[RMDB]
RNA sequence: GGGAACGACUCGAGUAGAGUCGAAAAUGGAUUUCGACAGAUUUCUUGUCGCACAGAUAGCAUGCCAAGCGCUGCUUGUAAAACAGCAACAAAAAUAACUGUAAACAACACAGAUUACGCUCCAGCUUACGCUAAAGCUGCGUGAGUUAAUCUCCUUGUUACUAUCUUAGUUCGCUAAGAUAGUAACAAAAGAAACAACAACAACAAC
Reactivity to 2A3 in 0.01 (KOAc 150mM, MgCl2 10mM, bicine 150mM(pH8.5), 24C), signal-to-noise 7, nucleotides 027 to 156: u100g050g030a050u070u070u070c050g010a010c020a030g130a130u070u090u060c070u040u050g010u030c010g010c030a040c010a050g140a050u120a020g010c060a050u180g020c020c030a140a050g000c050g000c070u020g000c000u030u040g110u120a050a070a040a050c010a020g030c020a010a050c040a050a140a030a020a030u130a060a050c020u020g030u110a070a100a060c050a080a010c040a040c020a060g030a020u030u070a020c070g010c040u010c010c000a000g000c000u040u050a030c050g000c100u110a120a070a090g070c080u030g030c050g050u050g000a010g010u010u040a030a060u020c020u030c020c010u000u010
Reactivity to DMS in 0.01 (KOAc 150mM, MgCl2 10mM, bicine 150mM(pH8.5), 24C), signal-to-noise 2, nucleotides 027 to 156: u000g000g020a240u000u000u000c010g050a090c020a060g020a110u000u010u010c020u000u000g010u010c040g000c050a070c080a080g010a140u030a010g060c040a110u000g040c010c020a130a170g000c080g060c010u000g010c040u000u000g000u000a040a130a100a300c100a010g020c010a130a300c040a010a130a050a090a100u010a040a100c030u000g010u020a120a140a090c060a080a080c120a000c020a090g000a130u010u000a040c040g000c000u000c010c000a140g010c030u000u030a070c100g000c050u000a090a130a110g020c000u000g000c000g010u000g010a050g000u000u020a060a190u010c000u000c010c080u000u020